[RMDB]
RNA sequence: GGGAACGACUCGAGUAGAGUCGAAAAGCCGACUGCACGUGCGUGCGAGCAGUUUUCGAAAUCGCACGAUUCACGUAAAGACCCAACUCUACUCGAUGCGAGGGUCAGCAAGCAAGCAGCAAUAAAACCAUAGUAAACUAUUCGUAGUUUACUAUGGAAAAGAAACAACAACAACAAC
Reactivity to 2A3 in 0.01 (KOAc 150mM, MgCl2 10mM, bicine 150mM(pH8.5), 24C), signal-to-noise 7, nucleotides 027 to 126: g050c030c020g060a090c050u060g010c040a000c020g000u010g000c000g000u010g000c010g000a050g040c080a060g020u050u040u140u250c060g110a090a080a080u020c000g000c000a000c000g010a030u140u150c010a000c020g010u020a010a040a050g040a020c010c000c000a020a030c000u000c000u020a010c000u000c010g030a040u080g010c020g020a080g000g010g000u010c010a010g000c020a040a040g030c010a030a020g010c010a000g000c040a070a040u090a160a100a010a010
Reactivity to DMS in 0.01 (KOAc 150mM, MgCl2 10mM, bicine 150mM(pH8.5), 24C), signal-to-noise 9, nucleotides 027 to 126: g010c060c060g010a130c050u000g020c180a040c010g020u000g010c020g020u000g000c010g010a020g020c170a140g010u000u010u010u010c130g000a050a110a100u000c010g010c000a020c010g010a220u010u010c030a010c020g000u000a050a140a100g010a090c030c020c020a090a040c010u000c000u000a010c000u000c000g010a020u000g010c050g010a100g010g010g010u000c020a080g010c040a060a080g000c060a040a060g010c050a030g000c070a080a090u010a050a060a110a130
Description
Conditions: 150 mM KOAc, 10 mM MgCl2 and 150 mM bicine (pH 8.5), 24 C. This 177-nucleotide RNA was probed chemically with 2A3 and DMS. For DMS the reverse transcriptase was MarathonRT. The 2A3 profile rests on 27,592 reads. High DMS reactivity at an A or C suggests that its Watson-Crick edge is free. Source: RMDB library M2PK90, as collected in RNAgym.